Chemical mapping of a 177-nucleotide RNA with DMS and 2A3. Values are in units of 0.01, from 0 to 300, in steps of 10. Source: RMDB library TTRDEL, as collected in RNAgym. The DMS profile rests on 5,836 reads. The reactions ran in a buffer of 150 mM KOAc, 10 mM MgCl2 and 150 mM bicine (pH 8.5), at 24 C.
[RMDB]
RNA sequence: GGGAACGACUCGAGUAGAGUCGAAAAGAUAUGGAGAGUGGAACGAUAAGCAGCAGUCGGAAACGACUGGCUGCUUUUGACGUUCGCUCCUAAGUCAAACUUGUUUCAUGUUCGCAUGAAACAAGAACUCACAUACUUACUUCGGUAAGUAUGUGAGAAAAGAAACAACAACAACAAC
Reactivity to DMS in 0.01 (KOAc 150mM, MgCl2 10mM, bicine 150mM(pH8.5), 24C), signal-to-noise 4, nucleotides 027 to 126: g010a050u000a300u010g010g000a040g010a030g000u020g010g010a010a000c000g020a150u000a010a010g010c000a010g000c000a030g010u010c000g010g000a120a100a170c010g010a020c000u000g010g000c010u000g000c000u000u000u000u010g010a130c070g000u000u000c000g000c000u000c000c000u000a060a200g010u000c020a090a120a170c010u000u000g000u010u000u000c010a010u000g000u000u010c210g020c000a010u000g000a010a010a000c000a000a000g000a080a120
Reactivity to 2A3 in 0.01 (KOAc 150mM, MgCl2 10mM, bicine 150mM(pH8.5), 24C), signal-to-noise 3, nucleotides 027 to 126: g030a020u070a020u220g020g010a060g010a010g210u300g040g090a030a000c010g040a110u020a080a010g000c010a000g010c010a000g000u000c000g020g030a110a040a040c020g000a000c010u010g100g000c010u010g000c000u010u000u010u010g010a000c010g010u000u010c010g000c010u000c000c000u060a160a030g040u020c080a070a090a120c030u000u010g010u010u000u010c010a000u010g060u030u120c300g000c090a000u000g010a000a000a020c010a000a000g010a000a010